[RMDB]
RNA sequence: GGGAACGACUCGAGUAGAGUCGAAAAACAUAGUUUGGCCGACGUCAUACCAUUGAAGACGAAUCGUUAAAGACACCAGCUCGUCUUAUAGGAGCCCAUUUAGCAUAAACAGUCCUGUAGGAACCAACAUACACGAGAGGUUCGCCUCUCGUGUAUGAAAAGAAACAACAACAACAAC
Reactivity to DMS in 0.01 (KOAc 150mM, MgCl2 10mM, bicine 150mM(pH8.5), 24C), signal-to-noise 2, nucleotides 027 to 126: a070c080a080u010a080g010u010u000u010g030g050c040c030g020a060c060g010u000c040a020u000a100c090c070a100u000u010g010a120a050g020a070c060g010a090a050u010c100g030u000u010a040a050a080g000a040c090a090c050c060a050g020c100u020c050g000u000c030u000u010a050u010a060g020g010a070g000c040c040c040a080u010u000u010a080g010c060a050u000a040a060a040c060a080g000u000c020c030u030g000u000a070g000g010a070a100c050c050a040a150
Reactivity to 2A3 in 0.01 (KOAc 150mM, MgCl2 10mM, bicine 150mM(pH8.5), 24C), signal-to-noise 2, nucleotides 027 to 126: a000c010a010u160a040g050u050u040u120g060g000c010c030g020a050c020g010u000c030a040u070a180c000c050a100u060u220g080a080a010g000a010c000g030a050a070u080c040g030u060u080a050a080a000g100a030c020a040c050c000a030g030c010u020c040g080u000c050u020u070a060u040a030g090g010a040g010c020c000c030a000u070u050u150a050g010c000a010u100a190a090a040c020a020g130u010c000c000u040g020u070a020g040g000a000a000c030c020a020a080

Source information: An RNA of 177 nucleotides, treated with DMS and 2A3 and read out base by base. DMS adducts were read by reverse transcription with MarathonRT. For DMS, 1,618 sequencing reads were counted. Values cover nucleotides 27 to 126. The data come from the RNA Mapping Database (RMDB), library M2PK90.